[RMDB]
This 207-nucleotide RNA was probed chemically with DMS and 2A3. Conditions: 150 mM KOAc, 10 mM MgCl2 and 150 mM bicine (pH 8.5), 24 C.

RNA sequence: GGGAACGACUCGAGUAGAGUCGAAAAGAACCUGAUUAGAGGAAACUCAAAGAGUGCUAUGGUAUGGUGACGGAGUGCGCUGGUCAAGAGUGUAAAAGCUUUUUGAACAGAGAGCAUUUCCGGCAGCAGAGAGACCUGAAAAAGCAAUUUUUCUGGAACAUUAUGAUAUCUUCGGAUAUCAUAAUGUAAAAGAAACAACAACAACAAC
Reactivity to DMS in 0.01 (KOAc 150mM, MgCl2 10mM, bicine 150mM(pH8.5), 24C), signal-to-noise 1, nucleotides 027 to 156: g000a160a160c000c010u000g010a140u000u000a160g000a090g000g000a130a140a150c030u000c030a140a120a160g020a090g030u000g000c040u000a100u000g030g010u010a120u000g040g000u030g030a040c000g020g000a070g060u010g040c000g000c010u010g020g000u000c020a010a060g000a010g050u010g010u000a100a070a190a300g010c000u000u000u000u000u020g010a020a000c000a130g000a050g000a160g030c030a030u000u000u000c010c000g000g000c040a040g000c010a050g000a150g030a120g000a060c030c030u020g010a000a030a060a050a120g000c040a040a050u010u000u010u010u000c010u000g000g010a300
Reactivity to 2A3 in 0.01 (KOAc 150mM, MgCl2 10mM, bicine 150mM(pH8.5), 24C), signal-to-noise 3, nucleotides 027 to 156: g040a050a030c020c000u060g040a150u060u260a090g030a050g050g030a100a060a050c030u030c090a110a110a040g090a040g040u080g010c050u050a050u170g010g040u030a050u090g050g080u040g010a020c000g010g000a000g010u000g000c040g000c000u000g000g000u010c000a010a000g010a000g020u080g010u100a030a050a040a020g010c000u030u100u050u060u070g000a020a000c010a010g020a010g020a060g060c000a000u280u230u020c000c000g000g010c010a010g010c020a000g040a020g010a010g030a080c000c020u040g040a020a080a040a030a020g030c020a010a020u080u050u020u080u030c010u000g000g040a050
Values cover nucleotides 27 to 156.